[RMDB]
RNA sequence: GGGAACGACUCGAGUAGAGUCGAAAAACGAACGUGUGUACGUGAGAGAGUGAGAGUACGUUCUCUCUCGUGAGUACGUGAUCGAGUACGAGAGUGAGAACUCGUUCACUCUCACGUGAGAUCACGAGAACACUCGAGUGAGAACGUGUGUUCGAGAGAUACGUUAUAAAUUCGUUUAUAACGUAUCAAAAGAAACAACAACAACAAC
Reactivity to 2A3 in 0.01 (KOAc 150mM, MgCl2 10mM, bicine 150mM(pH8.5), 24C), signal-to-noise 9, nucleotides 027 to 156: a010c080g050a040a010c050g030u080g020u050g050u230a020c050g030u090g020a050g010a010g000a010g060u080g030a070g000a010g060u080a010c010g000u000u000c000u000c000u000c000u000c000g010u020g010a040g020u080a020c010g000u000g000a000u010c010g000a010g040u090a050c090g010a000g000a000g010u010g010a050g040a150a100c110u070c150g090u060u010c000a000c000u000c000u000c010a010c030g020u040g010a050g000a000u010c000a000c010g020a050g060a030a020c070a020c020u010c010g000a000g000u020g000a010g000a010a000c010g000u010g000u010g000u010u040c040g030a030g000a000
Reactivity to DMS in 0.01 (KOAc 150mM, MgCl2 10mM, bicine 150mM(pH8.5), 24C), signal-to-noise 7, nucleotides 027 to 156: a100c050g020a070a050c060g020u000g010u010g030u000a050c040g010u010g020a110g000a090g020a070g020u000g010a130g000a130g010u010a030c030g010u000u010c000u000c000u000c010u000c000g010u000g010a100g030u000a120c020g020u000g000a030u000c030g010a300g020u000a070c050g010a050g000a040g010u000g000a060g010a100a150c170u010c160g010u000u000c000a020c010u000c010u000c000a030c060g020u010g000a250g000a050u000c020a010c000g000a090g000a090a090c070a050c010u000c010g000a070g020u000g010a070g020a030a050c010g010u000g010u000g010u000u000c030g000a190g010a300
Structure probing data (2A3 and DMS) for a 207-nucleotide construct. The reactions ran in a buffer of 150 mM KOAc, 10 mM MgCl2 and 150 mM bicine (pH 8.5), at 24 C. DMS adducts were read by reverse transcription with MarathonRT. Values cover nucleotides 27 to 156. In probing experiments dimethyl sulfate is read out at A N1 and C N3, which are open when not base-paired. The data come from the RNA Mapping Database (RMDB), library OK3TST. For DMS, 31,939 sequencing reads were counted.